Overview
An RNA of 207 nucleotides, treated with 2A3 and read out base by base. For 2A3, 816 sequencing reads were counted.
[RMDB]
RNA sequence: GGGAACGACUCGAGUAGAGUCGAAAACAUGCGUGUAAACAGGAGUAUGAUGAGGAUGUACCUCAGCAUUUCCGUCAUACUCAAUAUCAUUGCCCUCAUAACUCUCUUCCUGCCAACCGAUAGAGCUCGUGGACUCAUGGGGGACGCGGCUUGGAAGUGUGUCUGAGUUUUUCGAAACUCAGACACAAAAAGAAACAACAACAACAAC
Reactivity to 2A3 in 0.01 (KOAc 150mM, MgCl2 10mM, bicine 150mM(pH8.5), 24C), signal-to-noise 2, nucleotides 027 to 156: c080a050u130g010c040g060u070g060u120a080a060a020c030a050g130g000a000g020u000a020u010g000a000u010g020a090g040g000a000u000g000u100a130c020c040u060c050a000g000c000a030u020u000u160c020c000g000u010c010a020u010a010c000u000c010a020a050u150a090u060c070a080u040u190g070c000c020c000u080c040a090u050a160a060c010u020c010u000c010u120u020c010c000u020g010c010c010a050a010c000c040g020a030u060a150g030a000g040c030u040c100g080u170g030g020a010c080u000c060a110u060g230g000g000g000g000a000c060g040c030g130g040c130u080u110g040g080a000a060g020
Overview: High 2A3 reactivity points to a flexible backbone, as in loops and unpaired stretches.